[RMDB]
RNA sequence: GGGAACGACUCGAGUAGAGUCGAAAAAUGUAUUGCUGGUUACGGGUUCGCAUUUAUCUGUGGAAGAGACGGUGUGAGAAUAUGUUCCGGGACCACACGGAGAACAGAUGACGUCUCCGGUAGACGUGUAUCCGGAUACUCCGUAUCCUAUUCCACAUCAUGGGAUUGUUUUCGAACAAUCCCAUGAAAAAGAAACAACAACAACAAC
Reactivity to 2A3 in 0.01 (KOAc 150mM, MgCl2 10mM, bicine 150mM(pH8.5), 24C), signal-to-noise 1, nucleotides 027 to 156: a000u050g010u070a060u060u100g050c020u030g030g020u070u110a070c040g020g000g040u010u000c010g000c030a040u130u070u150a150u090c050u090g030u060g080g030a020a010g030a000g030a020c020g010g010u010g000u020g030a090g130a140a100u180a060u200g100u060u030c000c000g000g000g050a010c020c010a000c020a000c010g000g000a020g000a100a030c000a060g150a210u150g070a080c090g020u000c000u000c000c000g000g000u040a110g010a160c080g000u030g010u050a130u010c000c000g000g000a020u030a000c010u000c000c000g000u030a030u000c000c020u050a120u050u000c030c010a030c030a020
Reactivity to DMS in 0.01 (KOAc 150mM, MgCl2 10mM, bicine 150mM(pH8.5), 24C), signal-to-noise 2, nucleotides 027 to 156: a100u000g020u010a050u000u000g040c010u000g020g010u030u000a120c030g010g000g010u000u020c030g050c070a100u000u000u000a110u000c090u000g000u010g020g000a060a050g000a090g000a050c020g020g030u010g020u000g000a180g030a080a140u010a050u000g020u010u000c010c020g020g000g010a080c030c030a030c020a040c010g000g020a030g020a020a150c050a090g000a170u000g020a100c080g000u000c000u010c020c090g040g000u010a040g040a080c050g000u000g030u000a130u000c020c020g030g000a130u000a050c030u000c050c040g040u000a150u000c040c060u000a210u000u010c020c010a030c020a260
An RNA of 207 nucleotides, treated with 2A3 and DMS and read out base by base.
The RNA was probed in 150 mM KOAc, 10 mM MgCl2 and 150 mM bicine (pH 8.5) at 24 C.
For 2A3 the reverse transcriptase was SuperScript II with manganese.
DMS adducts were read by reverse transcription with MarathonRT.